Description
Structure probing data (2A3 and DMS) for a 177-nucleotide construct. Source: RMDB library RFMREP, as collected in RNAgym. The RNA was probed in 150 mM KOAc, 10 mM MgCl2 and 150 mM bicine (pH 8.5) at 24 C. For 2A3 the reverse transcriptase was SuperScript II with manganese. Values cover nucleotides 27 to 126. The 2A3 profile rests on 10,761 reads. For DMS the reverse transcriptase was MarathonRT.
RNA sequence: GGGAACGACUCGAGUAGAGUCGAAAAUACAGCCUUAGUUCAGAUCACAUAUGACUAUCUUUUGCGAGUCUGAUCGAUACUCUGAUGAAGGCUGUACCCUCUCUCUUCUUCUCUUAGCUUCUUGAUGCAUGUACUAUUGCUUCGGCAAUAGUACAUGAAAAGAAACAACAACAACAAC
Reactivity to 2A3 in 0.01 (KOAc 150mM, MgCl2 10mM, bicine 150mM(pH8.5), 24C), signal-to-noise 7, nucleotides 027 to 126: u020a000c000a000g000c000c000u110u070a080g080u090u030c010a010g000a020u040c040a030c030a120u150a060u180g020a010c010u050a080u210c060u110u300u180u280g110c150g020a010g010u000c010u030g040a060u090c030g010a000u030a120c040u020c020u040g030a030u050g030a010a010g010g000c000u000g000u010a010c000c000c000u000c000u010c000u000c000u080u000c000u070u010c040u000c000u060u090a040g020c020u030u030c000u020u070g040a070u100g060
Reactivity to DMS in 0.01 (KOAc 150mM, MgCl2 10mM, bicine 150mM(pH8.5), 24C), signal-to-noise 4, nucleotides 027 to 126: u000a020c030a020g020c010c010u000u000a110g000u010u000c020a040g010a040u010c080a090c150a100u010a080u010g000a050c050u000a090u000c050u010u000u000u010g030c160g000a030g010u000c000u000g000a070u010c120g020a140u010a090c230u000c050u000g000a030u020g000a070a040g010g000c000u000g010u000a010c030c010c010u000c030u000c020u000c020u000u000c030u000u000c020u010c040u000u000a090g000c070u000u000c020u000u000g000a100u010g010